[RMDB]
RNA sequence: GGGAACGACUCGAGUAGAGUCGAAAAAGACAUUGCACGUGAAUUGGGUAAUGUUGUUAAGACAACAGUACAACCCACAGCGCCUGCCUAUGUUGUCAUUGAUAAAGUUGAUUUUGCCAAUGGUUUUUACCGUCUGUAUAGUGGAGACACAUUUUGGGCGUCUACCUAAUUUCGAUUAGGUAGACGCAAAAGAAACAACAACAACAAC
Reactivity to 2A3 in 0.01 (KOAc 150mM, MgCl2 10mM, bicine 150mM(pH8.5), 24C), signal-to-noise 1, nucleotides 027 to 156: a000g080a010c010a010u000u030g010c040a000c050g020u030g030a050a080u090u030g010g000g030u120a160a140u010g040u020u030g010u060u140a060a130g270a160c020a000a020c000a010g030u230a040c040a050a120c050c030c030a010c070a000g060c010g000c020c110u030g000c040c010u060a060u030g060u040u010g060u040c070a050u030u100g020a030u100a300a020a130g000u050u060g010a260u040u030u100u130g010c000c030a030a050u030g030g000u010u000u040u070u180a060c040c000g050u020c020u060g180u160a090u070a150g080u080g010g040a040g010a000c000a000c010a090u110u230u060u190g100g000